[RMDB]
RNA sequence: GGGAACGACUCGAGUAGAGUCGAAAAGUGUGCAAGCCAAGAAUAGGAGGAUGGUAUGGUUGAGGUUUACCAGGAGAGAAAGACAAGGGUAUCCUGAGAGUGUCUUCAAGAGUGUGCAUGCCAUGGUGGACUAGAAUCUACAGUGGGUAAGGAACUAUAUACUACUCAGGUUCGCCUGAGUAGUAUAAAAAGAAACAACAACAACAAC
Reactivity to 2A3 in 0.01 (KOAc 150mM, MgCl2 10mM, bicine 150mM(pH8.5), 24C), signal-to-noise 2, nucleotides 027 to 156: g070u060g000u030g020c010a040a060g010c030c040a090a000g080a110a080u160a060g120g000a060g000g030a070u020g000g010u050a050u070g030g000u060u110g020a080g000g060u020u050u050a030c030c030a010g000g040a060g010a000g010a040a000a060g090a020c070a040a060g040g000g000u050a060u050c000c010u050g000a030g020a030g070u110g000u020c000u020u040c050a050a020g060a020g030u080g000u020g040c000a030u120g020c040c000a030u070g020g010u020g000g000a000c000u050a020g070a020a050u050c000u050a050c020a010g000u030g000g030g000u030a000a030g000g000a000a020c010u000a000
Reactivity to DMS in 0.01 (KOAc 150mM, MgCl2 10mM, bicine 150mM(pH8.5), 24C), signal-to-noise 2, nucleotides 027 to 156: g020u000g020u010g000c040a070a130g040c020c050a080a110g020a110a090u000a040g000g000a120g030g020a120u010g020g020u010a070u000g020g020u010u010g010a100g030g010u010u010u000a060c040c030a090g010g010a100g010a100g000a070a030a080g030a120c050a080a140g020g030g000u000a090u000c050c040u030g020a140g010a120g020u000g010u000c020u000u000c070a060a090g020a110g000u010g040u000g010c020a080u000g000c020c020a070u000g000g040u010g010g000a060c060u010a140g010a030a090u000c030u000a040c010a040g030u000g010g020g020u010a050a100g010g010a070a060c080u000a170

Source: RMDB library OK3TST, as collected in RNAgym. The record gives the reactivity of an RNA of 207 nucleotides to 2A3 and DMS. The RNA was probed in 150 mM KOAc, 10 mM MgCl2 and 150 mM bicine (pH 8.5) at 24 C. For DMS, 4,845 sequencing reads were counted. DMS adducts were read by reverse transcription with MarathonRT. Reactivities are given for positions 27 through 156. 2A3 adducts were read by reverse transcription with SuperScript II with manganese.